[RMDB]
RNA sequence: GGGAACGACUCGAGUAGAGUCGAAAAGAGAAAGCCCAAGGGACAAGAAGUAAGGCUGAGGGAUGGAGCAGGGACCCCAGGAGAGAGUUCUCCAGGACAGGGGUGAGCAGGUUUUCUAUUCUAACCUCUGCUGCCCACUGUGCUCACCUGGUAGGGACAUUAAAUACCAGUUCGCUGGUAUUUAAUGAAAAGAAACAACAACAACAAC
Reactivity to DMS in 0.01 (KOAc 150mM, MgCl2 10mM, bicine 150mM(pH8.5), 24C), signal-to-noise 2, nucleotides 027 to 156: g010a190g000a100a060a100g020c030c030c040a070a160g010g000g010a110c030a080a090g000a060a090g000u010a050a080g010g020c030u000g020a130g010g030g010a100u010g010g010a120g020c080a100g000g030g010a090c020c050c020c020a080g010g020a070g000a080g030a150g000u010u010c040u000c020c070a080g020g020a050c040a030g000g010g030g030u000g030a030g070c080a100g030g020u000u010u010u000c090u010a190u000u000c120u010a050a040c040c000u010c050u010g000c020u000g000c040c010c000a090c030u020g020u000g010c000u020c050a120c050c010u000g000g000u000a050g020g020g020a260
Reactivity to 2A3 in 0.01 (KOAc 150mM, MgCl2 10mM, bicine 150mM(pH8.5), 24C), signal-to-noise 2, nucleotides 027 to 156: g070a010g020a030a050a020g000c040c010c050a020a030g040g000g010a040c050a100a050g050a060a030g090u140a070a050g040g020c070u050g030a070g000g010g010a040u090g020g030a030g010c030a030g000g020g060a050c030c000c000c040a010g030g000a030g010a010g000a020g020u110u070c040u000c030c040a030g010g010a010c010a000g000g010g000g000u030g060a000g000c030a010g020g060u040u030u040u100c090u150a230u150u100c020u130a020a010c000c010u090c040u040g000c000u000g010c020c020c010a230c030u000g000u020g030c020u030c030a040c000c000u030g020g020u050a060g040g000g000a000